RNA sequence: GGGAACGACUCGAGUAGAGUCGAAAAUUUUUGAGACAGGGUCUUACUCUGUCACCAAGGCUGGAGUGCAGUGGCAUGAUCAUGGCUCAAUGAAACAUCGACUUCCUGGGCUCAGGCGAUCCUCCCACCUCAGCCCCCUGAGUCUCUUGGACUCCAGACCUUAAAUAGCGUUCGCGCUAUUUAAGGUAAAAGAAACAACAACAACAAC
Reactivity to DMS in 0.01 (KOAc 150mM, MgCl2 10mM, bicine 150mM(pH8.5), 24C), signal-to-noise 1, nucleotides 027 to 156: u000u000u000u000u060g010a130g010a000c000a050g020g020g020u010c120u000u040a040c020u000c000u010g000u020c010a030c050c010a080a090g040g030c070u000g000g030a090g000u010g040c050a050g020u000g020g030c020a080u000g020a070u000c020a120u000g010g080c040u000c010a020a080u010g040a190a060a070c040a200u010c050g000a070c030u000u000c040c030u000g040g030g010c020u010c080a040g030g020c000g020a070u000c030c040u020c040c010c020a100c020c010u000c040a020g010c020c000c020c050c000u010g010a090g000u010c000u000c060u020u010g030g000a060c040u000c000c050a120g010